Conditions: 150 mM KOAc, 10 mM MgCl2 and 150 mM bicine (pH 8.5), 24 C. This 177-nucleotide RNA was probed chemically with 2A3 and DMS. DMS adducts were read by reverse transcription with MarathonRT. High DMS reactivity at an A or C suggests that its Watson-Crick edge is free.
[RMDB]
RNA sequence: GGGAACGACUCGAGUAGAGUCGAAAAUGUUCCGGAUUCGUCCGGAACAAAAUUUGGCACCGGUACUCGUCGAUACAAUGCCACGGAGAUGGACCGGGUGAAAAACCACUUAGUUCGCUAAGUGGAACAAGCAGUAAGGUUUCGACCUUACUGCUUGAAAAGAAACAACAACAACAAC
Reactivity to 2A3 in 0.01 (KOAc 150mM, MgCl2 10mM, bicine 150mM(pH8.5), 24C), signal-to-noise 2, nucleotides 027 to 126: u050g000u000u000c000c010g000g000a040u040u040c110g040u000c000c000g000g030a010a000c000a010a000a010a010u070u020u060g100g030c060a040c080c000g000g000u040a070c020u030c080g050u040c020g040a020u090a260c060a220a150u230g100c060c010a030c040g090g000a120g030a070u030g040g010a020c020c000g030g020g010u070g000a040a060a010a040a030c010c000a000c010u000u010a000g010u030u050c200g000c110u010a000a000g010u010g000g010a020a010
Reactivity to DMS in 0.01 (KOAc 150mM, MgCl2 10mM, bicine 150mM(pH8.5), 24C), signal-to-noise 4, nucleotides 027 to 126: u000g010u000u000c010c010g000g000a030u000u000c160g010u000c010c010g000g030a010a020c000a020a010a080a150u000u000u010g010g000c010a090c010c020g020g010u000a040c010u000c010g010u000c030g020a190u020a100c200a070a100u010g020c120c150a050c030g010g030a150g010a040u000g010g000a050c010c010g000g000g030u010g010a030a030a020a090a130c010c000a010c000u010u010a010g000u000u010c230g010c000u010a000a030g020u000g000g010a090a050
For DMS, 3,301 sequencing reads were counted.